[RMDB]
RNA sequence: GGGAACGACUCGAGUAGAGUCGAAAACACGGCGGCCUUCGUGUUCAAGCCGGACAUGACCGCACUGCCGAACGAGCUGAAGCGCAUCACGACGUUCGGCGGCGACACAGUCGCGAAGGACACGAUCGUGGUGUGCUCCUUUCGAGGAGCACACCACAAAAGAAACAACAACAACAAC
Reactivity to DMS in 0.01 (KOAc 150mM, MgCl2 10mM, bicine 150mM(pH8.5), 24C), signal-to-noise 1, nucleotides 027 to 126: c140a150c130g000g050c090g020g020c070c040u000u000c020g020u000g000u010u000c010a120a300g040c050c170g040g000a100c080a080u000g040a300c210c030g020c000a060c000u000g020c000c000g040a060a030c000g000a190g040c210u010g000a060a180g030c100g040c300a070u000c060a000c120g000a120c010g000u000u000c000g010g000c070g000g000c020g030a030c070a110c070a040g060u000c040g000c000g020a080a010g000g000a030c020a010c020g000a060u000c060
Reactivity to 2A3 in 0.01 (KOAc 150mM, MgCl2 10mM, bicine 150mM(pH8.5), 24C), signal-to-noise 1, nucleotides 027 to 126: c080a020c060g110g000c030g020g000c010c030u000u020c000g010u010g000u040u010c030a050a030g040c070c000g070g020a040c040a050u050g010a000c010c010g050c070a030c140u110g000c050c000g000a030a000c020g090a030g070c050u050g020a130a060g180c140g010c230a060u090c020a030c060g100a020c020g020u010u010c000g000g000c000g000g000c000g000a020c050a000c010a090g030u010c010g000c020g110a060a080g000g030a000c040a010c100g090a100u060c040
Chemical mapping of a 177-nucleotide RNA with DMS and 2A3. The reactions ran in a buffer of 150 mM KOAc, 10 mM MgCl2 and 150 mM bicine (pH 8.5), at 24 C. 2A3 is a SHAPE reagent: it acylates the 2'-hydroxyl of flexible nucleotides of all four kinds. In probing experiments dimethyl sulfate is read out at A N1 and C N3, which are open when not base-paired. For 2A3 the reverse transcriptase was SuperScript II with manganese.